[RMDB]
RNA sequence: GGGAACGACUCGAGUAGAGUCGAAAAAACCUGUUGAUUGAAAUUGAACCGUCCUGUUAUCGAAAGAUAGGCAGAAGAUACGAAAUGUGUGACAGCAUGGGAAGUAAAGGCAGACCGUGGUUCCCUUAAAAUCGUCGAAUCUUCGGAUUCGACGAAACAGAGAAUAGUACUUCGGUACUAUUCUCUGAAAAGAAACAACAACAACAAC
Reactivity to 2A3 in 0.01 (KOAc 150mM, MgCl2 10mM, bicine 150mM(pH8.5), 24C), signal-to-noise 1, nucleotides 027 to 156: a000a000c050c000u070g030u110u060g120a300u030u090g080a100a110a140u070u120g020a070a040c050c000g000u030c020c000u020g010u060u010a020u020c060g050a060a050a000g030a030u030a050g110g000c020a010g010a150a010g010a000u180a070c030g040a010a090a060u160g080u010g020u040g040a010c020a000g000c010a020u060g000g000g040a100a020g020u120a140a110a010g000g000c010a010g020a030c000c020g000u040g000g070u020u060c000c000c000u010u000a040a040a040a090u030c010g010u000c000g000a000a000u000c000u020u000c140g060g000a010u000u000c000g010a000c000g000a010a000a000
Reactivity to DMS in 0.01 (KOAc 150mM, MgCl2 10mM, bicine 150mM(pH8.5), 24C), signal-to-noise 2, nucleotides 027 to 156: a090a080c020c000u020g010u000u000g000a160u010u000g010a050a180a090u010u000g010a070a070c010c010g020u000c050c000u000g020u000u000a070u000c050g020a130a090a140g020a060u010a060g010g020c010a060g000a040a050g020a070u000a120c050g030a060a070a110u000g000u000g030u000g020a070c100a060g000c020a050u000g020g010g010a060a070g010u010a020a070a110g000g000c020a090g000a070c030c020g010u000g030g010u010u000c000c020c020u010u010a030a040a060a120u000c010g030u000c000g020a020a000u000c010u000u000c300g030g000a010u000u000c020g020a010c000g010a000a020a070

The data come from the RNA Mapping Database (RMDB), library M2RFPK. Structure probing data (2A3 and DMS) for a 207-nucleotide construct. For 2A3, 709 sequencing reads were counted. Reactivities are rounded to 0.1 and cut off at 0 and 3. As a SHAPE reagent, 2A3 marks flexible, mostly unpaired nucleotides at the ribose 2'-OH.